[RMDB]
RNA sequence: GGGAACGACUCGAGUAGAGUCGAAAACUCUGCGACGGGCUGGCCGGGCUUCCAGACCUUGUCGCUGCUGGCCCAGCUGCCGGAAUACCGCACCAUGCACGAGACGCUCGCCGACGAGGUCGUGCGGCGAGUCUCGUUUGUUCGCAAACGAGACUCGAAAAGAAACAACAACAACAAC
Reactivity to 2A3 in 0.01 (KOAc 150mM, MgCl2 10mM, bicine 150mM(pH8.5), 24C), signal-to-noise 6, nucleotides 027 to 126: c010u030c050u060g000c010g040a020c020g010g030g000c010u020g020g010c030c070g050g050g000c030u110u030c040c020a300g030a300c060c030u090u300g050u060c040g010c020u000g000c020u030g020g020c000c020c010a030g010c070u050g010c000c000g040g020a080a060u110a120c030c010g030c010a020c030c020a070u140g010c040a020c070g060a050g060a040c050g090c080u030c010g060c080c070g120a210c060g030a030g020g070u040c020g010u020g010c000g020g030
Reactivity to DMS in 0.01 (KOAc 150mM, MgCl2 10mM, bicine 150mM(pH8.5), 24C), signal-to-noise 6, nucleotides 027 to 126: c030u000c050u010g000c010g010a070c030g000g020g000c010u000g010g000c130c080g020g010g010c070u010u000c060c010a030g000a130c040c050u000u010g020u000c040g030c010u000g020c100u010g010g010c030c020c040a110g000c070u000g010c030c010g000g010a130a090u010a120c060c020g020c050a080c040c070a090u010g000c040a070c060g010a120g000a110c080g000c040u000c050g010c050c040g000a100c060g000a110g010g000u000c040g010u000g010c010g000g010